An RNA of 177 nucleotides, treated with 2A3 and DMS and read out base by base. It was measured as part of the RMDB library OK1LIB. For 2A3, 1,261 sequencing reads were counted.
RNA sequence: GGGAACGACUCGAGUAGAGUCGAAAAGAAAGAAAUCGAGAGACUAGCAAUAUCCUUAGAUCGAAUAACUCGUUCUUGAUCUAACUGAGGGAUGAGUGUAAAAGCGGAUUCUAGUCUAAUCGAGAAAGGGUAUGUUUGAGUUCGCUCAAACAUACCCAAAAGAAACAACAACAACAAC
Reactivity to 2A3 in 0.01 (KOAc 150mM, MgCl2 10mM, bicine 150mM(pH8.5), 24C), signal-to-noise 2, nucleotides 027 to 126: g160a020a120a000g140a020a080a120u060c000g030a000g000a030g020a000c000u000a000g000c040a080a130u080a060u080c000c000u020u020a000g010a140u220c070g050a030a120u080a060a000c030u020c040g060u060u000c070u060u260g120a150u010c030u040a190a060c100u080g120a000g000g000g000a000u030g000a020g000u090g020u120a080a060a000a000g050c000g010g000a000u020u000c000u000a000g000u000c000u000a160a100u000c010g030a000g050a090a030a000
Reactivity to DMS in 0.01 (KOAc 150mM, MgCl2 10mM, bicine 150mM(pH8.5), 24C), signal-to-noise 1, nucleotides 027 to 126: g030a090a090a090g000a030a080a140u000c030g090a030g000a060g000a030c020u000a070g030c300a030a080u020a080u020c000c000u030u030a300g000a000u010c010g020a100a080u000a090a030c030u000c000g000u010u000c000u000u000g010a070u000c100u000a110a050c300u120g060a070g000g000g000a000u030g000a000g000u000g020u010a050a000a130a050g000c070g010g000a020u000u020c000u000a010g000u000c000u000a040a000u000c000g030a060g000a080a120a070